[RMDB]
RNA sequence: GGGAACGACUCGAGUAGAGUCGAAAAGCUUGACUGUAAGGCUGUCGAGUAAUUUGAACGGUGAUGCCUCCUCCACUGCAUAGCCAUUGGCUGGAGAAAUUUCUAGCCAGCAAAGUGCUAGCCAUAGUCUUAGCUACUGAUUCGUCAGUAGCUAAGAAAAAGAAACAACAACAACAAC
Reactivity to DMS in 0.01 (KOAc 150mM, MgCl2 10mM, bicine 150mM(pH8.5), 24C), signal-to-noise 6, nucleotides 027 to 126: g000c010u000u010g010a050c040u010g010u010a110a110g020g010c060u000g000u000c050g000a040g000u020a050a120u010u010u000g000a110a100c120g010g010u000g010a090u000g020c020c020u000c030c020u000c020c030a070c130u000g000c040a090u000a070g010c040c050a140u010u000g010g020c010u000g000g000a030g010a080a090a150u010u010u000c010u000a030g000c000c000a040g010c170a050a090a090g000u000g020c010u000a060g010c030c180a100u010a100g000
Reactivity to 2A3 in 0.01 (KOAc 150mM, MgCl2 10mM, bicine 150mM(pH8.5), 24C), signal-to-noise 2, nucleotides 027 to 126: g030c010u020u020g020a020c010u030g070u160a080a040g130g070c020u010g050u020c020g020a010g040u050a080a250u130u120u150g080a090a030c050g030g020u050g060a080u110g030c020c020u040c020c010u000c020c010a050c030u030g010c050a140u020a020g010c010c000a030u020u070g010g000c010u010g020g010a020g040a030a190a010u150u150u000c010u010a010g000c000c060a010g000c020a070a070a030g070u120g060c000u010a010g000c010c010a070u080a100g010

Annotation: An RNA of 177 nucleotides, treated with DMS and 2A3 and read out base by base. For 2A3 the reverse transcriptase was SuperScript II with manganese. The reactions ran in a buffer of 150 mM KOAc, 10 mM MgCl2 and 150 mM bicine (pH 8.5), at 24 C. For DMS the reverse transcriptase was MarathonRT. The data come from the RNA Mapping Database (RMDB), library OK2TST. Reactivities are given for positions 27 through 126.